An RNA of 207 nucleotides, treated with 2A3 and read out base by base. Source: RMDB library OK3TST, as collected in RNAgym. 2A3 adducts were read by reverse transcription with SuperScript II with manganese. The RNA was probed in 150 mM KOAc, 10 mM MgCl2 and 150 mM bicine (pH 8.5) at 24 C.
RNA sequence: GGGAACGACUCGAGUAGAGUCGAAAAACAUACAGACCCUGUGGGCUGAGAUGUCCCCUGGUUCAGCAGGGGCUGACUCUGUUAGGUCACCUGAGUGCCUUUCUGUGCCCCUGGGUGCUGCAUCAUGCUUGCAGAUGGCAUGGGAGUCGGCAGGUCCAUUCCGCACCCUGUUCGCAGGGUGCGGAAUAAAAGAAACAACAACAACAAC
Reactivity to 2A3 in 0.01 (KOAc 150mM, MgCl2 10mM, bicine 150mM(pH8.5), 24C), signal-to-noise 1, nucleotides 027 to 156: a000c050a010u230a060c040a020g090a120c000c000c010u040g000u300g000g000g000c050u080g000a010g060a120u030g190u300c050c060c000c000u010g020g140u190u300c120a090g030c000a000g050g000g000g030c030u060g010a060c000u060c060u110g010u020u000a000g060g000u140c020a060c050c020u150g140a140g160u040g020c000c000u010u010u010c050u150g250u110g070c000c030c070c000u040g020g020g030u040g030c000u020g000c000a010u030c000a010u040g040c020u030u080g040c060a000g020a140u110g040g000c020a010u000g000g040g000a020g060u050c000g000g000c020a020g030g120u070c040c000
The 2A3 profile rests on 480 reads.